[RMDB]
RNA sequence: GGGAACGACUCGAGUAGAGUCGAAAAUGUUUAGAGGUAGAACCAAAAUUGGCUCUGUAAAAUCGCAGAUCUCAAGAUGUGCUGGGAGAGACCUCAAGAGAUCAUCUGGUGGGCUCUGCCCUCAGACCAGCAAGGUAGGGUGAGCCACAUUUUACAAGAUUAGCACGCUAUUCGUAGCGUGCUAAUCAAAAGAAACAACAACAACAAC
Reactivity to 2A3 in 0.01 (KOAc 150mM, MgCl2 10mM, bicine 150mM(pH8.5), 24C), signal-to-noise 2, nucleotides 027 to 156: u080g010u010u110u080a040g000a010g010g030u030a030g050a140a070c050c030a060a040a090a150u100u100g030g010c000u030c020u070g040u080a070a040a020a030u140c080g000c060a020g000a020u000c070u010c030a050a020g010a050u050g010u030g080c000u060g010g060g000a050g010a020g010a040c010c000u000c010a030a010g030a030g010a110u030c010a050u000c140u150g110g010u050g010g030g010c000u020c020u100g110c000c020c000u000c010a030g040a050c000c000a030g090c050a160a010g050g000u060a000g000g000g000u040g020a000g000c000c000a000c000a020u050u060u010u020a030c050a030a050
Source: RMDB library OK3TST, as collected in RNAgym. The record gives the reactivity of an RNA of 207 nucleotides to 2A3. The RNA was probed in 150 mM KOAc, 10 mM MgCl2 and 150 mM bicine (pH 8.5) at 24 C. Values cover nucleotides 27 to 156. The 2A3 profile rests on 1,115 reads.